An RNA of 177 nucleotides, treated with DMS and read out base by base. The RNA was probed in 150 mM KOAc, 10 mM MgCl2 and 150 mM bicine (pH 8.5) at 24 C. For DMS the reverse transcriptase was MarathonRT. Source: RMDB library RFMREP, as collected in RNAgym. Reactivities are given for positions 27 through 126.
RNA sequence: GGGAACGACUCGAGUAGAGUCGAAAAAUGCCGCGAGGCGGAGCAAAUCGCAAAAAAGGCGCCCCAGUUCGGAUUGCAGGCUGCAAUUCGCCUGCAUGAAGUCGGAAUCGCUAGUAAUCGGAGAUCAUCCUUAGGGAAAGUUCGCUUUCCCUAAGGAAAAAGAAACAACAACAACAAC
Reactivity to DMS in 0.01 (KOAc 150mM, MgCl2 10mM, bicine 150mM(pH8.5), 24C), signal-to-noise 1, nucleotides 027 to 126: a040u010g000c010c010g010c210g020a120g000g000c020g030g000a030g000c100a020a130a090u010c010g000c010a000a020a040a070a100a160g000g010c060g040c140c040c010c050a120g000u000u000c000g010g000a140u000u000g010c000a000g000g000c000u030g000c140a100a130u000u000c210g020c030c000u010g000c010a010u000g010a230a150g010u000c040g010g020a120a060u000c040g060c030u000a080g010u030a100a100u040c090g010g020a070g000a080u000c100a060